[RMDB]
RNA sequence: GGGAACGACUCGAGUAGAGUCGAAAAUUAAAUGAUGUAGUACGGCCGCCACUGAAGGACGGGUCCUCUCCGAAAGGAGAGUUGAGUAGAGUGUGACCAGGACCGGGUGCUAGUCACUGGUGAAAAACAUUUCACUUAGAUUCGUCUAAGUGAAAUGAAAAGAAACAACAACAACAAC
Reactivity to DMS in 0.01 (KOAc 150mM, MgCl2 10mM, bicine 150mM(pH8.5), 24C), signal-to-noise 7, nucleotides 027 to 126: u000u010a060a100a090u010g000a060u000g010u000a050g010u000a050c060g010g010c020c020g010c040c020a090c070u010g020a100a100g010g010a060c040g000g010g010u010c060c010u000c000u000c000c000g010a090a090a170g010g000a020g010a020g000u000u000g010a090g020u000a070g010a080g020u000g010u000g010a060c040c070a080g000g000a050c100c030g010g010g020u000g000c030u000a060g000u000c020a040c050u000g000g010u000g000a030a050a060a080a120
Reactivity to 2A3 in 0.01 (KOAc 150mM, MgCl2 10mM, bicine 150mM(pH8.5), 24C), signal-to-noise 3, nucleotides 027 to 126: u110u040a050a050a080u110g040a030u070g030u180a020g030u020a040c020g030g020c010c010g030c040c010a070c050u110g060a090a030g040g030a050c050g000g040g000u000c010c000u000c010u000c000c000g040a070a030a020g000g020a000g010a010g010u020u010g010a010g020u090a040g030a050g030u100g040u060g030a020c010c030a030g020g000a010c000c000g090g000g040u040g000c030u030a010g030u050c010a020c170u080g070g000u100g030a070a070a010a000a010